Annotation: Structure probing data (2A3 and DMS) for a 177-nucleotide construct. DMS (dimethyl sulfate) methylates the pairing face of unpaired adenines and cytosines. Conditions: 150 mM KOAc, 10 mM MgCl2 and 150 mM bicine (pH 8.5), 24 C. For DMS the reverse transcriptase was MarathonRT.
RNA sequence: GGGAACGACUCGAGUAGAGUCGAAAAGAUAUGGACGUGGACAUGCCUACUCAUCGGAAACGAUGACUAGGCAACAGCCACAGUCCUAAGUCAAAGACACAAUCCAUGUUCGCAUGGAUUGUGUCAACACUGACCUUGUGUUCGCACAAGGUCAGUGAAAAGAAACAACAACAACAAC
Reactivity to 2A3 in 0.01 (KOAc 150mM, MgCl2 10mM, bicine 150mM(pH8.5), 24C), signal-to-noise 1, nucleotides 027 to 126: g030a000u060a060u110g020g010a000c010g010u010g000g030a050c060a160u090g000c000c000u000a000c000u000c010a000u000c010g010g060a020a080a060c000g020a010u000g000a000c000u000a000g000g000c000a000a000c020a010g040c000c000a010c080a020g000u000c000c000u010a160a010g070u040c050a080a090a120g010a000c010a000c000a000a000u000c000c020a020u010g050u040u120c300g000c120a000u000g000g000a010u000u000g000u010g000u020c000a000a000
Reactivity to DMS in 0.01 (KOAc 150mM, MgCl2 10mM, bicine 150mM(pH8.5), 24C), signal-to-noise 3, nucleotides 027 to 126: g020a030u000a300u010g010g000a010c010g000u000g000g000a070c070a190u010g020c000c010u000a000c210u010c010a000u000c000g000g000a170a060a140c000g000a000u000g000a010c040u000a000g010g010c010a010a000c250a170g010c000c000a000c000a060g030u000c000c000u000a010a070g000u000c050a100a130a130g020a010c000a010c000a010a000u000c000c000a020u000g000u000u010c170g000c010a020u000g000g000a000u000u000g010u000g000u000c010a070a100